RNA sequence: GGGAACGACUCGAGUAGAGUCGAAAAAGCACAUUACACACAGGCAGCUUUGUAAGCGAGUUUGUGAAAUAAUCACUCAGAUGUCUUACACAUAAGGAAUUAGAGAGAUUUUCGGUGAUUAAGACAGCGUUAUAUGUGCGUUCGCGCACAUAUAACGAAAAGAAACAACAACAACAAC
Reactivity to 2A3 in 0.01 (KOAc 150mM, MgCl2 10mM, bicine 150mM(pH8.5), 24C), signal-to-noise 3, nucleotides 027 to 126: a000g150c100a070c020a090u090u140a070c060a010c020a010c000a040g030g000c010a010g030c020u070u110u300g200u200a030a010g010c010g030a120g040u040u040u020g020u000g000a080a040a000u120a000a020u080c030a010c030u070c040a020g020a120u030g040u040c010u000u030a020c050a010c010a130u180a160a070g100g040a040a070u130u140a080g030a000g030a000g030a110u140u080u010u090c040g040g000u020g020a050u000u030a030a010g070a000c030a020g050
Reactivity to DMS in 0.01 (KOAc 150mM, MgCl2 10mM, bicine 150mM(pH8.5), 24C), signal-to-noise 3, nucleotides 027 to 126: a090g020c120a100c130a080u000u020a090c200a300c030a010c030a010g000g010c030a150g000c020u000u010u010g000u000a100a050g020c030g000a090g020u000u010u000g060u000g020a060a080a150u010a020a030u010c030a050c020u000c100a170g020a070u000g010u000c000u000u000a080c130a080c090a060u000a090a060g000g020a040a090u000u000a050g000a130g000a110g000a040u000u000u000u000c080g000g000u000g000a090u000u020a020a040g000a110c080a020g020